Overview
The record gives the reactivity of an RNA of 177 nucleotides to DMS and 2A3. It was measured as part of the RMDB library OK1LIB.

RNA sequence: GGGAACGACUCGAGUAGAGUCGAAAAGAAGGUCGAGUGCACGACCAGAGAGUGCGGUGAGCGACCGACAAAGAGUUCGAAUCGGAACGAACUACCGCAAACGAUCGACUGAAGAUCGAAGUGAGAACGUAUAGGCAGGGUUCGCCCUGCCUAUACGAAAAGAAACAACAACAACAAC
Reactivity to DMS in 0.01 (KOAc 150mM, MgCl2 10mM, bicine 150mM(pH8.5), 24C), signal-to-noise 4, nucleotides 027 to 126: g010a140a110g010g020u000c020g000a150g010u070g020c120a070c040g000a010c020c030a180g010a090g020a190g030u020g010c020g000g030u030g030a090g020c030g010a130c000c000g000a120c100a080a070a110g010a160g020u020u030c020g020a120a130u030c150g000g010a100a100c000g040a090a010c040u030a090c010c000g000c070a040a130a170c000g020a000u000c000g020a120c200u020g000a140a110g000a060u000c010g010a100a050g020u020g010a100g000a140a190
Reactivity to 2A3 in 0.01 (KOAc 150mM, MgCl2 10mM, bicine 150mM(pH8.5), 24C), signal-to-noise 3, nucleotides 027 to 126: g090a060a050g000g000u020c020g000a020g120u190g070c090a020c050g040a020c030c020a000g010a000g020a030g020u250g060c020g000g020u050g050a090g000c020g010a040c000c000g000a000c050a010a180a010g140a010g050u100u180c070g030a030a100u050c040g020g120a100a140c020g000a010a020c000u050a080c020c000g020c030a050a040a080c000g010a000u030c010g090a050c120u180g070a050a030g010a020u010c000g000a060a000g100u110g020a060g010a050a010